Record summary
An RNA of 177 nucleotides, treated with DMS and 2A3 and read out base by base. Conditions: 150 mM KOAc, 10 mM MgCl2 and 150 mM bicine (pH 8.5), 24 C.

RNA sequence: GGGAACGACUCGAGUAGAGUCGAAAAGAUAUGGACCCAUGUUGCUUUUGACGAAGUGUCGGAAACGACCUUCGAUAAGCAAUGUGGGUCCUAAGUCAAAAGGUACGCUCGUUCGCGAGCGUACCAAGUAGUAAAUCAACUUCGGUUGAUUUACUACAAAAGAAACAACAACAACAAC
Reactivity to DMS in 0.01 (KOAc 150mM, MgCl2 10mM, bicine 150mM(pH8.5), 24C), signal-to-noise 6, nucleotides 027 to 126: g020a040u000a300u010g010g010a000c000c000c000a010u000g010u000u000g000c000u000u000u010u010g010a230c170g000a010a000g010u020g020u000c000g000g000a100a080a190c010g000a010c010c000u000u000c010g010a060u000a010a010g000c000a010a010u000g030u000g010g000g010u000c000c000u000a000a060g010u000c030a090a070a150a120g000g010u000a010c000g010c000u000c000g010u000u010c200g010c010g010a010g010c000g010u000a000c010c000a000a010
Reactivity to 2A3 in 0.01 (KOAc 150mM, MgCl2 10mM, bicine 150mM(pH8.5), 24C), signal-to-noise 6, nucleotides 027 to 126: g020a010u070a040u110g000g010a010c000c000c000a010u020g020u010u010g020c040u140u120u170u290g190a150c030g000a010a010g040u050g000u300c000g010g040a060a060a040c000g000a000c000c000u000u000c010g000a010u020a040a030g000c000a000a010u020g000u000g000g000g000u000c000c000u000a000a000g000u000c010a000a000a000a090g010g000u000a010c000g000c010u010c000g030u080u080c300g020c020g140a000g000c000g000u000a000c000c000a000a000

The data come from the RNA Mapping Database (RMDB), library TTRDEL. For 2A3, 19,455 sequencing reads were counted. For DMS the reverse transcriptase was MarathonRT.